RNA sequence: GGGAACGACUCGAGUAGAGUCGAAAAAGCAUAGGCAACAUCCUAUCCUCGAUUUCCAAUAGAUUCAGUAAUUUCGAAUCACUCGAAACAUCGACGCGUACCAGUGGAACGUGAGGUUCAAACGCAGCGUCCGAAUAGGGUUCGCCCUAUUCGGACGAAAAGAAACAACAACAACAAC
Reactivity to 2A3 in 0.01 (KOAc 150mM, MgCl2 10mM, bicine 150mM(pH8.5), 24C), signal-to-noise 2, nucleotides 027 to 126: a000g110c030a050u120a010g100g000c030a080a030c020a120u080c010c000u030a030u060c000c010u050c030g090a100u030u000u080c010c000a040a080u060a140g060a090u070u060c040a030g090u060a110a220u030u040u200c060g030a010a040u070c050a020c030u020c010g020a030a080a080c040a100u070c030g040a030c060g040c010g030u040a060c010c010a130g080u020g080g050a010a040c040g090u060g080a060g140g000u030u000c040a120a100a000c050g000c040a030g040
Reactivity to DMS in 0.01 (KOAc 150mM, MgCl2 10mM, bicine 150mM(pH8.5), 24C), signal-to-noise 2, nucleotides 027 to 126: a090g000c070a030u000a040g020g010c030a050a110c300a120u000c020c030u000a050u020c100c020u000c030g070a170u000u000u000c020c060a050a190u000a030g000a050u010u020c050a050g020u020a110a140u000u000u000c020g000a000a080u010c020a200c170u000c060g000a030a110a140c180a110u010c030g000a060c070g000c050g000u000a060c080c100a200g010u020g000g000a010a110c120g020u000g020a020g020g000u000u000c060a050a100a140c050g010c110a100g010